[RMDB]
Conditions: 150 mM KOAc, 10 mM MgCl2 and 150 mM bicine (pH 8.5), 24 C. This 177-nucleotide RNA was probed chemically with DMS and 2A3.
RNA sequence: GGGAACGACUCGAGUAGAGUCGAAAAGGGAAAAGGAUUGGCUCUAAGGGUCGGGCGCGUUGGGCCUUGGGGGAAAGCCUCCGGAGCAGGAGGGCACUAGCCGGGCAACCGGCGGGCGCCUUCCAGCACACUUUGCAACUUUCGAGUUGCAAAGUGUAAAAGAAACAACAACAACAAC
Reactivity to DMS in 0.01 (KOAc 150mM, MgCl2 10mM, bicine 150mM(pH8.5), 24C), signal-to-noise 2, nucleotides 027 to 126: g010g000g000a050a040a090a090g000g000a090u010u010g010g010c000u020c060u010a100a180g000g000g000u010c090g000g000g010c040g020c090g010u000u020g000g000g000c120c060u000u050g000g010g000g000g010a090a080a220g000c050c000u020c020c040g010g030a090g010c020a060g020g000a010g010g000g020c000a040c000u030a170g050c000c000g020g000g000c300a050a120c000c000g000g000c010g000g000g000c160g000c000c020u000u000c000c000a040g020c000
Reactivity to 2A3 in 0.01 (KOAc 150mM, MgCl2 10mM, bicine 150mM(pH8.5), 24C), signal-to-noise 3, nucleotides 027 to 126: g060g020g020a050a030a000a030g080g040a110u120u170g030g000c010u010c040u110a050a120g080g000g020u130c100g030g050g000c040g010c020g050u070u050g020g010g020c000c040u040u090g020g000g000g020g020a090a090a020g100c000c010u030c000c040g030g000a060g010c020a030g000g000a000g010g000g000c000a000c000u020a070g000c000c000g010g020g000c030a060a090c010c000g000g000c000g010g010g010c070g000c000c000u000u020c000c000a010g000c010

2A3 adducts were read by reverse transcription with SuperScript II with manganese.
For DMS, 3,073 sequencing reads were counted.
Source: RMDB library RFM100, as collected in RNAgym.